An RNA of 177 nucleotides, treated with DMS and 2A3 and read out base by base. For DMS, 14,723 sequencing reads were counted. DMS adducts were read by reverse transcription with MarathonRT.
RNA sequence: GGGAACGACUCGAGUAGAGUCGAAAAGAUAUGGAAGGCGGAUAUGAACUACGCUAUCUGCUCGGAAACGAGCAGUAAGGCGCAUAUGCCAUUCCUAAGUCAAAACCAGUCCGUUCGCGGACUGGAACAUUAUUGUAACCUUCGGGUUACAAUAAUGAAAAGAAACAACAACAACAAC
Reactivity to DMS in 0.01 (KOAc 150mM, MgCl2 10mM, bicine 150mM(pH8.5), 24C), signal-to-noise 9, nucleotides 027 to 126: g010a040u000a270u010g000g010a040a040g000g010c040g020g010a110u000a040u000g010a120a120c130u020a270c020g020c010u000a250u000c000u000g010c000u000c000g010g000a070a060a170c000g010a010g010c000a000g000u000a050a170g010g000c010g010c030a020u000a050u000g000c000c000a140u000u000c000c000u000a040a150g000u010c030a080a050a120a180c000c000a000g000u000c000c000g030u000u010c190g010c010g000g000a010c000u000g000g000a040a070
Reactivity to 2A3 in 0.01 (KOAc 150mM, MgCl2 10mM, bicine 150mM(pH8.5), 24C), signal-to-noise 7, nucleotides 027 to 126: g000a000u030a010u070g000g020a010a010g020g010c080g120g110a040u030a010u080g050a160a170c160u180a080c300g000c010u010a030u060c000u000g000c000u000c010g010g000a020a030a010c010g000a000g000c010a000g010u020a080a130g060g000c100g000c090a000u010a010u050g020c000c010a110u010u000c000c000u000a070a010g030u010c030a010a010a090a230c000c000a000g000u000c010c010g020u050u080c300g010c020g100g000a000c000u000g000g000a000a000
It was measured as part of the RMDB library TTRDEL. The 2A3 profile rests on 29,721 reads. 2A3 adducts were read by reverse transcription with SuperScript II with manganese.